[RMDB]
Structure probing data (DMS and 2A3) for a 177-nucleotide construct.
RNA sequence: GGGAACGACUCGAGUAGAGUCGAAAAGCUCUAGGAGACUAGAGCGAUACGUUAGAGAGCUCGUGGCAGGACUAACGGAUAGCCAGGUACGAGGUUGCCAGAGGACAUAGCUAUAGCUAUGUCCAAAGAGCUUACAUAGGUUCGCCUAUGUAAGCUCAAAAGAAACAACAACAACAAC
Reactivity to DMS in 0.01 (KOAc 150mM, MgCl2 10mM, bicine 150mM(pH8.5), 24C), signal-to-noise 2, nucleotides 027 to 126: g040c000u020c000u000a010g000g000a230g010a200c000u000a020g030a000g010c010g010a050u020a010c040g000u000u000a040g010a120g000a130g000c020u000c090g000u020g000g030c070a090g010g000a160c050u000a050a060c090g010g000a120u010a120g000c040c000a080g000g000u000a070c140g000a070g000g010u020u000g000c060c010a110g020a240g000g020a010c010a000u000a000g000c040u000a150u070a150g010c000u000a010u010g000u000c000c000a000a020a100
Reactivity to 2A3 in 0.01 (KOAc 150mM, MgCl2 10mM, bicine 150mM(pH8.5), 24C), signal-to-noise 3, nucleotides 027 to 126: g000c000u000c000u000a010g000g040a080g030a140c000u000a000g020a000g010c020g010a000u010a050c030g010u020u020a020g020a020g010a030g090c010u010c120g120u090g050g030c050a070g000g040a020c000u010a060a000c070g040g040a080u060a050g060c050c080a060g060g070u030a020c060g110a080g050g060u120u070g070c030c050a040g050a100g030g000a000c000a010u000a000g000c010u120a020u080a300g000c000u000a000u020g000u000c000c000a000a000a000
The RNA was probed in 150 mM KOAc, 10 mM MgCl2 and 150 mM bicine (pH 8.5) at 24 C.